RNA sequence: GGGAACGACUCGAGUAGAGUCGAAAAUUAUAUUAUCGAUAAUUAAUCCGAACAUAUCAUUAAUCAAGUUAUUAUUCGAAGUGGUUUCUGCAUUCGGAACAGUCGGGUUAAGUAUGAACCUUACCACCAGGCCAACUAUAUUCGUAUAGUUGGCCUGAAAAGAAACAACAACAACAAC
Reactivity to DMS in 0.01 (KOAc 150mM, MgCl2 10mM, bicine 150mM(pH8.5), 24C), signal-to-noise 2, nucleotides 027 to 126: u020u000a060u010a070u000u000a120u010c010g020a040u000a020a100u010u000a110a080u000c020c000g020a080a230c120a060u000a050u000c020a060u000u000a050a090u010c100a090a070g020u010u020a050u010u030a090u000u000c030g000a070a270g060u000g020g020u000u000u020c070u020g020c120a110u000u020c070g060g000a080a060c170a080g020u000c050g000g000g040u000u020a020a050g000u000a020u000g040a060a160c080c050u000u000a170c050c040a070c130
This 177-nucleotide RNA was probed chemically with DMS. Source: RMDB library OK2TRN, as collected in RNAgym. For DMS, 792 sequencing reads were counted.